[RMDB]
RNA sequence: GGGAACGACUCGAGUAGAGUCGAAAAGUAUCCCUAGAUGAUAAAACACCGCACAUGGCUCGUAAGAGCGGUUCAAUUAGCAAGUAAUGCAAAUUACGCGAGGUAACGCAUGGCCUAGGCUCGUUAGAAAAGGGAGAAUCCUUCGGGAUUCUCCCAACAUCCCGAUAUUGUUCGCAAUAUCGGGAUGAAAAGAAACAACAACAACAAC
Reactivity to DMS in 0.01 (KOAc 150mM, MgCl2 10mM, bicine 150mM(pH8.5), 24C), signal-to-noise 2, nucleotides 027 to 156: g050u000a060u000c000c020c020u000a100g000a130u020g010a140u010a030a110a170a210c050a070c030c010g060c040a110c050a080u000g000g010c020u000c030g010u000a140a150g010a080g040c010g030g040u000u000c080a110a070u000u000a060g010c030a080a110g000u000a050a070u010g040c110a030a110a110u000u000a020c020g000c030g000a080g040g010u010a060a060c090g040c080a060u000g020g000c050c030u000a180g040g020c000u010c040g030u000u000a180g010a050a040a130a140g000g000g030a050g010a010a020u000c000c010u000u000c290g080g000g000a020u000u000c000u010c000c000c000a000a020
Reactivity to 2A3 in 0.01 (KOAc 150mM, MgCl2 10mM, bicine 150mM(pH8.5), 24C), signal-to-noise 2, nucleotides 027 to 156: g050u020a140u090c000c000c000u000a060g000a120u100g030a030u120a100a080a040a020c070a030c010c030g080c010a040c010a200u110g100g000c000u010c040g060u060a130a030g020a020g030c000g000g000u030u050c030a060a030u060u070a070g030c040a100a010g050u100a130a040u180g000c030a060a110a120u100u060a050c040g020c030g050a030g030g120u060a070a000c020g010c030a070u080g010g020c000c020u010a020g020g010c010u010c050g030u060u030a050g090a050a040a020a040g000g000g000a000g000a000a000u000c010c000u010u050c110g020g000g000a000u010u010c000u000c000c000c000a000a000